[RMDB]
RNA sequence: GGGAACGACUCGAGUAGAGUCGAAAAAGAUGCCAUGCCGACCCGAAGAGGAAAGAAGGACUCGGACGCGAACCCGUGAGUGGAACCUUGGUCUUUUAUUGGGGGGUACACUCGAGGAGUGGAAGGCUAAGUACUCGUUUCGACGAGUACAAAAGAAACAACAACAACAAC
Reactivity to DMS in 0.01 (KOAc 150mM, MgCl2 10mM, bicine 150mM(pH8.5), 24C), signal-to-noise 9, nucleotides 027 to 129: a040g020a080u060g020c090c050a000u030g000c070c030g020a100c020c050c090g030a060a050g000a030g030g010a020a030a020g030a050a060g040g020a070c080u020c120g000g040a070c080g030c090g030a060a090c020c020c020g000u010g020a020g050u020g000g000a140a090c040c020u000u030g000g000u030c090u000u020u020u030a060u020u010g000g040g030g000g020g000u010a110c080a050c030u000c020g020a050g000g000a000g010u040g000g020a020a000g000g000c050u040a060a120
Reactivity to 2A3 in 0.01 (KOAc 150mM, MgCl2 10mM, bicine 150mM(pH8.5), 24C), signal-to-noise 9, nucleotides 027 to 129: a000g110a030u120g030c030c000a040u120g010c000c000g030a040c000c000c030g010a050a010g050a020g030g050a060a040a020g060a020a020g020g010a020c010u020c040g030g010a030c040g030c040g050a030a050c000c000c010g020u050g030a030g020u050g010g020a060a030c010c000u020u040g080g040u100c030u050u160u080u090a190u150u130g030g000g000g000g000g010u050a040c020a010c030u020c010g020a040g020g010a020g020u090g010g020a030a010g020g000c020u050a130a040
Description: An RNA of 170 nucleotides, treated with DMS and 2A3 and read out base by base. As a SHAPE reagent, 2A3 marks flexible, mostly unpaired nucleotides at the ribose 2'-OH.